[RMDB]
RNA sequence: GGGAACGACUCGAGUAGAGUCGAAAAGCUCAUUACUUCGGUAAUGAGCAAAUAAAUUCAGCGGUAAAAGCUCCGCAAAUAUUACCGCUGUUGCGGAGCUUAAAACAGCUAGGUUCGCCUAGCUGAAGCAUAUUGUGAGAUUCGUCUCACAAUAUGCAAAAGAAACAACAACAACAAC
Reactivity to 2A3 in 0.01 (KOAc 150mM, MgCl2 10mM, bicine 150mM(pH8.5), 24C), signal-to-noise 3, nucleotides 027 to 126: g000c000u010c000a000u010u010a000c010u010u040c160g050g000u000a000a000u010g010a000g000c000a000a000a010u020a000a040a010u130u080c050a010g030c010g080g050u100a170a190a050a010g000c000u010c000c000g020c010a030a050a010u200a040u100u100a040c010c020g020c070u050g090u010u020g000c010g000g010a010g000c000u000u020a020a010a020a040c010a000g000c000u000a000g040g030u020u050c190g090c040c000u000a000g000c000u000g020a010a010
Reactivity to DMS in 0.01 (KOAc 150mM, MgCl2 10mM, bicine 150mM(pH8.5), 24C), signal-to-noise 3, nucleotides 027 to 126: g010c000u000c000a000u000u000a000c000u000u010c150g020g010u000a000a010u000g000a000g020c000a010a040a030u000a070a100a090u010u010c060a040g020c040g000g010u010a080a080a040a050g010c000u000c000c000g020c000a020a070a070u000a070u010u010a130c060c060g020c160u000g000u000u000g000c020g000g000a000g000c000u000u000a010a060a060a220c010a010g010c000u000a010g010g020u000u010c220g020c000c010u000a010g000c000u000g000a050a060
This 177-nucleotide RNA was probed chemically with 2A3 and DMS.
The reactions ran in a buffer of 150 mM KOAc, 10 mM MgCl2 and 150 mM bicine (pH 8.5), at 24 C.
DMS (dimethyl sulfate) methylates the pairing face of unpaired adenines and cytosines.
The data come from the RNA Mapping Database (RMDB), library M2PK50.
The 2A3 profile rests on 6,312 reads.